[RMDB]
RNA sequence: GGGAACGACUCGAGUAGAGUCGAAAACCAUAACAGUUCGCUGUUAUGGACUGUCGGAAUGGGGAAUAAUUAAUCGUCCGCUUACGAUUAAUACCGACUAUAAAGCGUAACACUUCGGUGUUACGAAGCCUACUAUGAGCUUCGGCUCAUAGUAGGCAAAAGAAACAACAACAACAAC
Reactivity to DMS in 0.01 (KOAc 150mM, MgCl2 10mM, bicine 150mM(pH8.5), 24C), signal-to-noise 2, nucleotides 027 to 126: c030c000a000u000a000a000c000a010g010u000u010c220g040c000u000g000u000u000a000u000g010g000a090c120u000g010u000c000g000g010a160a090u010g030g000g010g000a180a160u010a090a040u000u000a000a010u000c010g000u000c170c280g000c170u000u000a030c000g000a010u010u000a010a020u000a240c000c000g010a010c040u000a130u010a050a090a110g020c000g000u010a000a000c000a010c000u000u000c210g030g000u000g010u030u000a000c000g000a030a040
Reactivity to 2A3 in 0.01 (KOAc 150mM, MgCl2 10mM, bicine 150mM(pH8.5), 24C), signal-to-noise 3, nucleotides 027 to 126: c010c000a000u000a020a000c000a000g040u070u070c090g030c120u000g000u010u000a000u010g000g010a070c050u040g000u020c000g000g090a180a230u210g100g030g000g180a040a080u160a190a050u080u020a000a010u040c020g040u060c080c060g130c200u090u130a010c010g010a010u000u020a010a000u030a050c000c020g020a010c010u010a050u100a200a140a010g060c020g000u000a000a000c000a000c010u010u090c160g090g000u010g000u020u000a000c010g010a010a000

Description:
Chemical mapping of a 177-nucleotide RNA with DMS and 2A3. It was measured as part of the RMDB library M2PK50. The reactions ran in a buffer of 150 mM KOAc, 10 mM MgCl2 and 150 mM bicine (pH 8.5), at 24 C. Values are in units of 0.01, from 0 to 300, in steps of 10.